[RMDB]
Chemical mapping of a 207-nucleotide RNA with 2A3 and DMS. For 2A3 the reverse transcriptase was SuperScript II with manganese. It was measured as part of the RMDB library M2RFPK. Reactivities are given for positions 27 through 156.
RNA sequence: GGGAACGACUCGAGUAGAGUCGAAAAGGGUGAUGUCUCCUAACCUUUAUCAAUGGGGGCACUCGGUCGUGCUGUGGGUAGUAAUUUUAUUUCGUGCCUACCUUAGACGCUUGUCGUCGGGAGUAUGUGGGACUGAUGAACUUCGGUUCAUCAGUAAGUUUAUUUGCAGGUUCGCCUGCAAAUAAACAAAAGAAACAACAACAACAAC
Reactivity to 2A3 in 0.01 (KOAc 150mM, MgCl2 10mM, bicine 150mM(pH8.5), 24C), signal-to-noise 4, nucleotides 027 to 156: g040g010g010u090g020a080u070g030u040c010u030c020c000u070a090a150c020c040u140u210u140a210u210c140a100a100u170g000g000g000g000g000c010a010c010u040c060g050g020u020c030g020u040g030c030u030g020u050g020g050g010u010a010g070u010a090a230u020u150u060u220a160u050u090u090c070g020u070g030c000c010u040a040c010c010u010u020a040g000a010c020g010c060u130u270g080u240c020g000u010c000g010g070g000a030g000u070a090u170g060u120g040g000g040a000c000u010g000a000u010g000a000a000c000u020u020c070g060g000u000u010c000a000u000c000a000g010u000a010a000
Reactivity to DMS in 0.01 (KOAc 150mM, MgCl2 10mM, bicine 150mM(pH8.5), 24C), signal-to-noise 1, nucleotides 027 to 156: g020g000g000u000g000a060u010g040u000c040u000c010c000u020a090a100c100c060u000u010u000a130u010c070a080a140u010g070g100g020g020g050c010a060c020u010c020g020g010u020c030g000u000g010c020u000g070u000g050g020g000u020a110g010u020a050a050u030u000u000u000a080u000u020u020c050g000u000g000c000c000u020a060c030c080u000u010a110g020a060c010g000c040u000u000g000u000c010g060u000c000g000g000g000a120g010u000a040u020g020u030g060g000g000a090c020u010g010a020u010g000a000a010c000u000u000c300g050g010u000u000c000a000u000c000a000g000u000a000a120
For DMS the reverse transcriptase was MarathonRT.